RNA sequence: GGGAACGACUCGAGUAGAGUCGAAAAAACUGUGGAAGUGACGGAGGUUCAGUGCCGGAGACCUCGGGGUGACGGCUCACAGCGCCCAGCCCAGUGUGUGUCUGGGGCUGGGGGUCCAUAGGGCUAGAGAUGCAGGUGAUUUCGAUCACCUGCAUCUAAAAGAAACAACAACAACAAC
Reactivity to DMS in 0.01 (KOAc 150mM, MgCl2 10mM, bicine 150mM(pH8.5), 24C), signal-to-noise 1, nucleotides 027 to 126: a030a040c060u010g020u000g000g000a210a090g010u000g020a040c090g030g030a040g000g000u000u000c090a100g000u010g020c030c040g020g020a140g000a060c030c020u010c030g020g000g000g000u000g000a130c100g010g020c040u000c010a050c090a030g030c100g020c000c000c000a040g000c020c010c010a100g020u000g030u000g030u010g010u010c000u000g020g000g000g020c000u000g000g010g000g030g000u010c000c070a070u010a100g020g020g000c130u000a140g000